[RMDB]
RNA sequence: GGGAACGACUCGAGUAGAGUCGAAAAGGCUAGGUGGUAUUCCGGUGUGGGAUACUUGGUAAUAUGUAACGCUUAUUGCAUAAGAUUGUAGGACGGAAUUUACAGUCUUGGUUUUUAUAAACCUGAAAAAAGGAAUUACACUUCGGUGUAAUUCCAAUCAUUAAGUUGUGUUCGCACAACUUAAUGAAAAAGAAACAACAACAACAAC
Reactivity to 2A3 in 0.01 (KOAc 150mM, MgCl2 10mM, bicine 150mM(pH8.5), 24C), signal-to-noise 4, nucleotides 027 to 156: g030g000c050u050a010g000g100u040g030g040u100a050u030u050c040c050g120g040u110g020u140g050g040g010a040u050a110c010u040u100g010g010u060a040a030u050a080u120g060u060a110a010c040g000c110u060u060a050u080u120g000c010a030u020a120a020g020a050u030u040g030u050a040g040g100a010c050g010g040a020a020u050u070u040a060c010a010g010u010c000u040u030g020g000u030u040u000u060u000a130u150a070a060a030c000c010u020g110a080a000a000a010a020a030g010g000a000a000u000u000a000c000a000c000u050u110c240g070g000u000g000u000a000a000u000u000c000c000a000a010
Reactivity to DMS in 0.01 (KOAc 150mM, MgCl2 10mM, bicine 150mM(pH8.5), 24C), signal-to-noise 2, nucleotides 027 to 156: g000g030c030u000a050g030g030u010g010g010u000a090u000u000c030c030g030g030u000g030u020g010g000g000a030u000a030c020u020u000g010g020u010a060a120u000a050u010g000u000a080a110c080g000c080u000u000a060u010u000g010c010a180u010a080a040g010a040u000u000g010u000a040g020g010a200c010g000g030a100a300u000u000u000a040c030a040g010u010c020u000u010g010g000u000u000u000u000u000a100u010a110a030a030c010c000u000g010a000a040a050a120a140a170g000g020a030a010u000u000a000c000a020c000u000u000c300g070g040u010g000u010a000a000u000u000c000c000a020a040
This 207-nucleotide RNA was probed chemically with 2A3 and DMS. The data come from the RNA Mapping Database (RMDB), library M2RFPK. Reactivities are given for positions 27 through 156.